An RNA of 177 nucleotides, treated with DMS and 2A3 and read out base by base. The RNA was probed in 150 mM KOAc, 10 mM MgCl2 and 150 mM bicine (pH 8.5) at 24 C. 2A3 adducts were read by reverse transcription with SuperScript II with manganese. For DMS, 1,737 sequencing reads were counted.
RNA sequence: GGGAACGACUCGAGUAGAGUCGAAAAACGCCAGCCGAUGCGUUUCGCAGAGAUGUGACCAUCGCAACAAGUAGCAGUGGUGGUAGUACCAAUACGGUUUAUUUGGUUGAGAUGGUGCCGCCACGCGAUGGUCCAGUCAGUUCGCUGACUGGACCAUAAAAGAAACAACAACAACAAC
Reactivity to DMS in 0.01 (KOAc 150mM, MgCl2 10mM, bicine 150mM(pH8.5), 24C), signal-to-noise 2, nucleotides 027 to 126: a000c040g000c040c090a030g000c040c070g050a040u000g000c080g000u000u070u000c000g060c080a060g020a240g000a140u050g000u020g000a040c040c000a000u000c100g020c020a250a110c300a040a100g090u030a030g040c050a100g050u000g000g040u000g030g000u000a010g000u030a110c010c010a000a030u000a060c180g000g000u070u000u060a080u000u020u020g000g000u010u020g000a170g020a120u000g010g000u000g000c000c000g000c000c000a000c000g020c000g020
Reactivity to 2A3 in 0.01 (KOAc 150mM, MgCl2 10mM, bicine 150mM(pH8.5), 24C), signal-to-noise 2, nucleotides 027 to 126: a000c020g150c040c020a050g080c050c030g050a000u060g060c000g040u040u000u170c030g000c000a000g000a020g040a040u060g030u000g040a000c000c000a000u010c000g000c010a050a130c050a130a020g210u180a070g000c140a060g000u010g000g000u000g000g000u020a060g130u030a010c000c000a010a010u150a110c090g120g000u130u160u100a160u090u050u130g070g010u040u020g030a050g000a070u100g080g070u000g000c030c000g000c010c030a000c010g000c000g000